RNA sequence: GGGAACGACUCGAGUAGAGUCGAAAACUGCCGCACGGUCCUCCUCGGAUACUCCGCGUCAUCACAAGGCGAGCGGCACCAACGCCAAGUGAUGCUCCUUGAUCUGGUCCGGAAUCAUCUCCACACGCGUCGGAGGCGUAUUCGUACGCCUCCGACGAAAAGAAACAACAACAACAAC
Reactivity to 2A3 in 0.01 (KOAc 150mM, MgCl2 10mM, bicine 150mM(pH8.5), 24C), signal-to-noise 2, nucleotides 027 to 126: c030u060g030c010c000g010c000a020c070g040g080u040c000c050u030c000c000u040c080g030g000a040u070a150c010u000c070c020g030c020g140u060c010a010u000c000a020c030a080a090g060g000c000g070a020g040c150g040g000c020a030c000c020a060a010c020g000c000c010a070a030g050u030g000a020u040g000c030u040c000c000u120u110g070a190u100c010u070g080g030u020c000c000g000g080a020a050u070c040a030u060c020u020c050c000a020c020a000c060g040